Chemical mapping of a 207-nucleotide RNA with 2A3 and DMS. DMS adducts were read by reverse transcription with MarathonRT. 2A3 adducts were read by reverse transcription with SuperScript II with manganese.
RNA sequence: GGGAACGACUCGAGUAGAGUCGAAAACAUUGCCUUGGGCAGACUUAGCAAAGGCAACAAGUUGGGAAAUGGAUUAAUAAUAGGCCCUGCCCUUAUUACGAGGAUUACAUGAGUUAACACAUGCAAAGUGUUCAGAGCAGGCUCCCCACUAAGUGUAUGAUGCUAAUUAUUUCGAUAAUUAGCAUCAAAAAGAAACAACAACAACAAC
Reactivity to 2A3 in 0.01 (KOAc 150mM, MgCl2 10mM, bicine 150mM(pH8.5), 24C), signal-to-noise 3, nucleotides 027 to 156: c020a020u040u010g000c010c010u050u030g010g160g020c030a030g120a180c090u060u130a000g000c020a010a010a030g030g030c000a010a010c060a030a040g040u050u050g010g000g010a020a070a070u100g060g040a050u110u150a130a090u140a070a040u040a110g040g000c020c000c000u020g000c020c000c000u040u060a140u100u050a030c070g040a030g070g020a050u070u120a030c020a060u120g020a010g090u050u140a080a000c040a010c010a000u170g150c050a070a130a060g000u000g000u060u030c040a020g000a010g100c010a000g000g000c020u020c000c010c000c000a040c030u080a110a000g000u010g030u080a080
Reactivity to DMS in 0.01 (KOAc 150mM, MgCl2 10mM, bicine 150mM(pH8.5), 24C), signal-to-noise 3, nucleotides 027 to 156: c040a120u010u000g020c010c030u000u000g030g020g050c040a110g030a090c180u020u000a110g030c020a040a040a060g010g020c010a040a030c040a060a130g000u000u010g000g000g000a120a150a110u010g000g010a140u010u000a090a080u000a070a090u000a050g010g010c110c020c000u010g020c020c010c010u000u000a070u010u000a050c080g020a160g020g020a200u000u000a050c040a020u010g020a090g060u000u010a090a150c090a090c030a020u000g000c070a060a060a100g040u000g020u000u000c070a070g010a040g020c010a040g010g010c040u000c020c010c000c000a070c060u020a050a120g010u000g020u000a190